[RMDB]
The record gives the reactivity of an RNA of 207 nucleotides to 2A3.

RNA sequence: GGGAACGACUCGAGUAGAGUCGAAAAGCCUCAGGCAAAACAAGUGAAACACCUAAAAAAAAUCCCACGAAUGCAAUGUUCUUCACGCGUAGCGAAUGGGCAUCCUCGAAAACUUUUCGAGAAAAGUUUUUAACACCAGAAAUUCAGGCCAUAUUGGGAGAAUAAUACAGUUCGCUGUAUUAUUCUCAAAAGAAACAACAACAACAAC
Reactivity to 2A3 in 0.01 (KOAc 150mM, MgCl2 10mM, bicine 150mM(pH8.5), 24C), signal-to-noise 1, nucleotides 027 to 156: g000c000c010u060c160a070g070g000c070a060a060a130a000c010a070a070g030u040g040a010a110a000c100a070c010c120u240a110a010a000a000a000a020a150a050u030c000c000c010a040c030g060a070a030u130g060c040a000a090u090g010u020u030c050u040u040c040a020c090g000c000g040u100a060g000c010g100a100a030u100g000g000g020c060a060u030c040c000u000c000g040a070a100a200a300c090u200u130u070u070c070g010a060g160a030a100a000a000g010u010u030u040u110u170a060a010c050a030c020c010a050g090a060a160a100u190u120c020a090g000g020c050c000a050u000a060u140u250g050g050

The reactions ran in a buffer of 150 mM KOAc, 10 mM MgCl2 and 150 mM bicine (pH 8.5), at 24 C. Source: RMDB library OK3TST, as collected in RNAgym.